[RMDB]
RNA sequence: GGGAACGACUCGAGUAGAGUCGAAAAUAUACCCUACUCAACUAGAAGACGCGGGUUUACUAGUAUACGAAACACAACUAUUAGGUCAGAAUAUAUACGUACCUUUUGGGUUCUACAUUAAAGACACGCUCCAGUAUGUUUUCGAACAUACUGGAGCAAAAGAAACAACAACAACAAC
Reactivity to DMS in 0.01 (KOAc 150mM, MgCl2 10mM, bicine 150mM(pH8.5), 24C), signal-to-noise 1, nucleotides 027 to 126: u000a140u010a160c040c070c000u010a160c130u010c120a140a010c020u000a100g000a140a130g010a060c000g000c280g010g000g000u010u010u000a080c010u020a080g020u000a050u000a010c060g000a030a200a020c060a070c090a020a090c100u000a070u000u000a120g000g000u000c080a080g030a090a010u000a060u000a070u010a060c250g000u000a020c030c010u000u000u000u000g000g050g000u000u000c060u000a040c130a090u010u000a010a060a060g000a050c140a100c270
Reactivity to 2A3 in 0.01 (KOAc 150mM, MgCl2 10mM, bicine 150mM(pH8.5), 24C), signal-to-noise 1, nucleotides 027 to 126: u130a020u070a030c010c010c010u020a030c040u030c030a070a070c030u010a040g000a140a020g040a040c040g140c070g230g050g000u000u040u030a050c060u010a030g030u030a070u030a100c040g050a090a070a020c070a030c010a000a130c020u060a030u090u040a030g000g060u000c040a030g050a180a020u240a000u000a010u030a210c050g030u010a010c020c000u080u050u030u080g030g000g030u090u060c050u120a070c030a120u170u120a270a050a010g110a010c020a010c200
The record gives the reactivity of an RNA of 177 nucleotides to DMS and 2A3. Reactivities are given for positions 27 through 126. For 2A3, 939 sequencing reads were counted. Reactivities are rounded to 0.1 and cut off at 0 and 3. The reactions ran in a buffer of 150 mM KOAc, 10 mM MgCl2 and 150 mM bicine (pH 8.5), at 24 C.